[RMDB]
RNA sequence: GGGAACGACUCGAGUAGAGUCGAAAAUCUCAGCGCCCAUCCCUCCGGAGAGCAGCCGGGGGGCAUGACCGACCCACCGGGGCGCCGCCUCCGGCGCUCGCAGGCCACGGGUGAAGAAGAAAGUCCGUAGGUAUUAGUAAUUCGUUACUAAUACCUAAAAAGAAACAACAACAACAAC
Reactivity to 2A3 in 0.01 (KOAc 150mM, MgCl2 10mM, bicine 150mM(pH8.5), 24C), signal-to-noise 5, nucleotides 027 to 126: u010c010u010c020a040g030c020g030c030c010c000a030u030c000c000c000u010c010c000g050g010a140g030a030g180c110a030g050c020c000g000g000g000g000g010g000c000a020u030g010a020c000c060g040a050c000c000c010a020c030c000g020g010g020g000c010g000c000c000g060c010c040u220c120c040g000g000c010g000c010u000c010g060c050a060g000g020c030c040a040c060g010g000g020u050g010a020a030g030a030a010g040a080a110a010g060u050c030c030g030
Reactivity to DMS in 0.01 (KOAc 150mM, MgCl2 10mM, bicine 150mM(pH8.5), 24C), signal-to-noise 5, nucleotides 027 to 126: u000c010u000c020a100g000c070g010c030c030c020a090u010c010c000c010u010c000c010g000g010a220g010a130g010c160a130g020c000c000g000g000g010g000g010g020c170a010u010g010a130c070c030g020a110c030c000c020a150c110c040g030g000g000g010c020g020c020c030g000c200c070u010c160c060g010g000c030g020c000u000c010g000c060a080g010g010c100c070a120c140g000g000g000u010g000a080a070g000a110a070g010a080a160a120g000u000c020c040g010